[RMDB]
RNA sequence: GGGAACGACUCGAGUAGAGUCGAAAAGAGUCCUAUUUCGAUAGGACUCAACUAAAAUCAGCGGUAAAUAAUAAGCUGGCGUUACCGCUGAACGCCAGCAUACUAGCCUCGUCUUCGGACGAGGCAAGUGUAUCACUUGCUUCGGCAAGUGAUACACAAAAGAAACAACAACAACAAC
Reactivity to 2A3 in 0.01 (KOAc 150mM, MgCl2 10mM, bicine 150mM(pH8.5), 24C), signal-to-noise 2, nucleotides 027 to 126: g000a000g000u020c010c010u000a010u040u040u020c190g100a010u000a000g000g030a000c000u000c000a000a000c000u070a000a020a050a110u030c010a000g010c010g220g240u270a090a100a000u160a060a060u130a240a040g020c000u000g000g020c000g000u010u010a170c000c010g070c030u010g020a000a000c000g000c010c000a000g000c010a020u140a050c090u130a080g010c000c000u000c000g000u000c000u020u050c170g090g000a000c000g000a010g020g020c000a000a000